This 177-nucleotide RNA was probed chemically with 2A3 and DMS. Conditions: 150 mM KOAc, 10 mM MgCl2 and 150 mM bicine (pH 8.5), 24 C. It was measured as part of the RMDB library OK1LIB. The 2A3 profile rests on 1,990 reads. DMS adducts were read by reverse transcription with MarathonRT.
[RMDB]
RNA sequence: GGGAACGACUCGAGUAGAGUCGAAAAGGUAAAUCGAUUGAAAUUCUACUUACUACUGAUAGUACUAUUAGCAACAUAAGUGAGCAUUUAGGUUUUAGUAGUAGCUCCACUUACUCUAAAAUGUUUAUCGCUUCACAAUAUUCGUAUUGUGAAGCGAAAAAGAAACAACAACAACAAC
Reactivity to 2A3 in 0.01 (KOAc 150mM, MgCl2 10mM, bicine 150mM(pH8.5), 24C), signal-to-noise 4, nucleotides 027 to 126: g080g000u120a100a060a050u170c110g080a100u080u240g080a010a040a100u050u070c030u070a120c000u050u000a020c020u010a000c000u010g010a050u080a140g140u110a070c020u010a030u070u080a020g050c000a000a160c030a110u130a300a050g070u060g130a090g030c010a070u090u050u030a050g060g000u030u080u030u000a000g000u000a000g010u010a050g020c000u060c010c000a040c020u090u160a050c000u070c010u060a080a050a060a060u110g040u030u060u030a060
Reactivity to DMS in 0.01 (KOAc 150mM, MgCl2 10mM, bicine 150mM(pH8.5), 24C), signal-to-noise 2, nucleotides 027 to 126: g000g000u060a000a060a060u070c080g000a060u010u010g000a150a140a030u000u000c070u010a010c030u000u000a070c130u000a000c030u040g000a000u020a040g010u010a050c060u020a060u010u010a080g010c060a040a130c140a280u010a050a070g020u000g030a130g030c090a300u000u000u020a000g000g020u000u000u000u040a020g020u050a000g030u010a020g010c100u000c040c010a060c100u020u010a000c050u000c070u040a050a040a030a040u070g000u020u000u010a150